[RMDB]
RNA sequence: GGGAACGACUCGAGUAGAGUCGAAAACGUGCCUUCAUGCUAAGGGUUUGAUAUCUGCUAAAACCCGGUGCAUCCAUCAAUGCAGGUUAAGCCAAAGGGAUGUCCCGACCGGAGGCCGACAAUCCAGAUAGCUCAAGAAUGUUCGCAUUCUUGAGAACAUUUAGACUAGUUUCGACUAGUCUAAAUGAAAAGAAACAACAACAACAAC
Reactivity to DMS in 0.01 (KOAc 150mM, MgCl2 10mM, bicine 150mM(pH8.5), 24C), signal-to-noise 8, nucleotides 027 to 156: c050g020u010g020c010c010u000u000c030a100u000g020c030u000a300a240g000g010g020u000u000u000g010a160u000a060u000c070u000g000c100u000a150a030a020a030c010c000c010g010g040u010g030c010a030u000c050c040a290u000c070a090a170u010g010c030a070g010g020u000u000a080a110g030c030c030a040a300a240g010g010g000a080u000g000u010c030c010c000g010a190c040c020g000g010a300g020g010c010c000g000a090c090a070a100u000c020c030a190g000a130u000a100g010c000u000c000a010a040g010a030a020u000g010u000u000c270g030c010a010u000u000c000u000u000g010a010g000a050a110
Reactivity to 2A3 in 0.01 (KOAc 150mM, MgCl2 10mM, bicine 150mM(pH8.5), 24C), signal-to-noise 9, nucleotides 027 to 156: c030g070u110g020c010c010u090u100c070a060u120g040c040u100a080a150g010g000g000u010u010u010g030a030u040a040u080c040u040g010c030u060a060a070a020a030c000c010c000g010g000u030g000c010a050u020c040c010a080u130c060a130a150u150g010c010a020g060g020u070u100a070a020g040c040c030a060a030a050g040g000g000a020u040g040u040c000c010c000g020a020c010c010g010g000a010g000g000c000c000g010a020c030a070a040u050c050c000a010g060a230u150a080g040c000u000c000a000a000g000a000a010u010g020u050u070c170g020c110a000u000u000c000u000u000g000a000g000a010a000

This 207-nucleotide RNA was probed chemically with DMS and 2A3. It was measured as part of the RMDB library M2RFPK. Values cover nucleotides 27 to 156.